[RMDB]
RNA sequence: GGGAACGACUCGAGUAGAGUCGAAAACCACAGAUCUUCGGAUCUGUGGAAACAACAAAUACAGUCAGUUGAGACAGACACAAAUACAUUGAGUGUACAAUGAAAGCGAUUGCUUCGGCAAUCGCAAUCGCUGAUAUAUCUUCGGAUAUAUCAGCGAAAAAGAAACAACAACAACAAC
Reactivity to DMS in 0.01 (KOAc 150mM, MgCl2 10mM, bicine 150mM(pH8.5), 24C), signal-to-noise 2, nucleotides 027 to 126: c010c000a010c010a000g000a000u000c000u000u000c150g010g010a010u000c000u010g020u000g000g010a030a110a050c070a060a030c110a030a140a060u010a080c110a030g010u000c040a060g020u000u000g020a130g000a050c070a140g010a090c130a060c140a040a090a090u010a030c110a020u000u000g000a160g000u020g010u020a070c130a120a020u010g000a060a150a090g020c010g000a000u000u010g000c010u000u000c150g030g000c000a000a000u000c010g020c000a020a020
Reactivity to 2A3 in 0.01 (KOAc 150mM, MgCl2 10mM, bicine 150mM(pH8.5), 24C), signal-to-noise 3, nucleotides 027 to 126: c000c000a000c010a010g010a010u000c010u120u200c250g140g000a010u000c010u000g000u000g010g030a030a030a000c010a010a030c020a020a140a010u180a090c010a000g090u050c030a010g000u090u090g190a060g030a120c030a020g080a030c030a020c010a100a190a000u200a080c080a100u030u110g050a030g120u080g010u080a080c050a040a110u130g080a190a060a010g030c000g000a000u020u030g000c000u040u040c190g060g000c000a010a000u000c000g000c010a000a010
Record summary: This 177-nucleotide RNA was probed chemically with DMS and 2A3. For DMS the reverse transcriptase was MarathonRT. For 2A3 the reverse transcriptase was SuperScript II with manganese. The 2A3 profile rests on 2,540 reads. Reactivities are rounded to 0.1 and cut off at 0 and 3.